[RMDB]
RNA sequence: GGGAACGACUCGAGUAGAGUCGAAAAAUUACCGUCAGCUGAAGGAUCAGCCCGACUCGUGCGACGUGAUUAAGCUGCCUGAAGAAAAGAAAGUGCCUAUUGAUGUGCUGACAGCUGUGACGGAUGACAAGCAACCCGCCACGCUGUGGCUGACCAAUACGCAAGUAACAUUCGUGUUACUUGCGUAAAAAGAAACAACAACAACAAC
Reactivity to 2A3 in 0.01 (KOAc 150mM, MgCl2 10mM, bicine 150mM(pH8.5), 24C), signal-to-noise 3, nucleotides 027 to 156: a000u070u050a090c000c030g010u040c010a040g000c050u030g050a090a020g090g030a130u080c000a010g020c020c000c000g120a090c030u060c060g010u060g080c050g040a010c020g060u060g050a110u120u090a080a010g010c030u040g050c040c050u090g090a120a080g040a090a130a000a000g050a040a090a010g060u100g000c020c000u070a100u060u110g090a090u110g070u010g060c000u070g100a030c000a010g000c010u140g000u020g050a000c010g000g020a030u050g090a050c140a150a010g110c030a060a110c040c000c000g000c010c000a010c000g050c010u000g010u050g060g000c020u000g050a020c030c030a010a020
Reactivity to DMS in 0.01 (KOAc 150mM, MgCl2 10mM, bicine 150mM(pH8.5), 24C), signal-to-noise 1, nucleotides 027 to 156: a130u000u000a090c070c000g000u000c030a140g040c040u000g010a060a160g020g000a070u010c030a070g010c050c040c020g010a090c020u000c040g000u000g010c010g010a040c010g080u010g020a120u010u000a080a120g020c010u000g000c000c010u020g000a160a100g030a050a150a040a170g020a100a060a080g030u010g010c010c010u000a140u010u000g000a070u000g030u010g020c030u000g000a060c080a010g020c010u000g050u000g000a060c000g030g000a010u000g000a180c070a120a130g020c150a110a130c030c000c000g040c000c030a080c030g010c030u000g060u000g010g000c000u000g000a120c040c020a060a300
An RNA of 207 nucleotides, treated with 2A3 and DMS and read out base by base.
For DMS the reverse transcriptase was MarathonRT.
It was measured as part of the RMDB library OK3TST.
The reactions ran in a buffer of 150 mM KOAc, 10 mM MgCl2 and 150 mM bicine (pH 8.5), at 24 C.